The record gives the reactivity of an RNA of 177 nucleotides to 2A3 and DMS. The data come from the RNA Mapping Database (RMDB), library OK1LIB. Reactivities are given for positions 27 through 126. The RNA was probed in 150 mM KOAc, 10 mM MgCl2 and 150 mM bicine (pH 8.5) at 24 C. As a SHAPE reagent, 2A3 marks flexible, mostly unpaired nucleotides at the ribose 2'-OH. For 2A3 the reverse transcriptase was SuperScript II with manganese. Reactivities are rounded to 0.1 and cut off at 0 and 3. For DMS the reverse transcriptase was MarathonRT.

RNA sequence: GGGAACGACUCGAGUAGAGUCGAAAAUACUUAAACUAUGGUAAGGUCCCUAUAUUCAGAGGAAUCAUUAGGGGAUUGGAUGCAAAGAGAUGGUCAAGAGUGAACUUUGGAAACAAUGAUCAAGUUCCCUAUUAGUCAGAUUCGUCUGACUAAUAGGAAAAGAAACAACAACAACAAC
Reactivity to 2A3 in 0.01 (KOAc 150mM, MgCl2 10mM, bicine 150mM(pH8.5), 24C), signal-to-noise 8, nucleotides 027 to 126: u110a010c020u080u090a060a110a060c090u090a110u200g070g050u070a050a030g060g020u040c010c000c010u030a050u010a020u070u060c030a030g080a060g210g160a080a050u060c050a070u160u140a070g020g010g000g020a030u050u060g050g020a030u070g030c040a000a160a000g040a020g030a060u050g000g020u040c020a010a030g040a040g110u200g040a010a020c020u080u160u130g030g040a080a050a010c050a080a120u100g020a040u090c040a020a060g020u040u050c000
Reactivity to DMS in 0.01 (KOAc 150mM, MgCl2 10mM, bicine 150mM(pH8.5), 24C), signal-to-noise 6, nucleotides 027 to 126: u020a070c080u010u030a080a080a100c130u010a050u010g000g020u000a070a110g000g000u000c000c000c000u010a040u000a060u010u010c050a130g030a110g010g010a040a040u010c140a080u010u010a080g020g010g000g010a040u000u000g000g010a070u010g010c050a040a060a080g010a070g010a070u010g010g010u010c030a020a040g000a080g010u020g000a020a030c030u000u020u040g000g000a140a080a030c050a030a080u010g000a040u010c040a020a080g000u000u000c080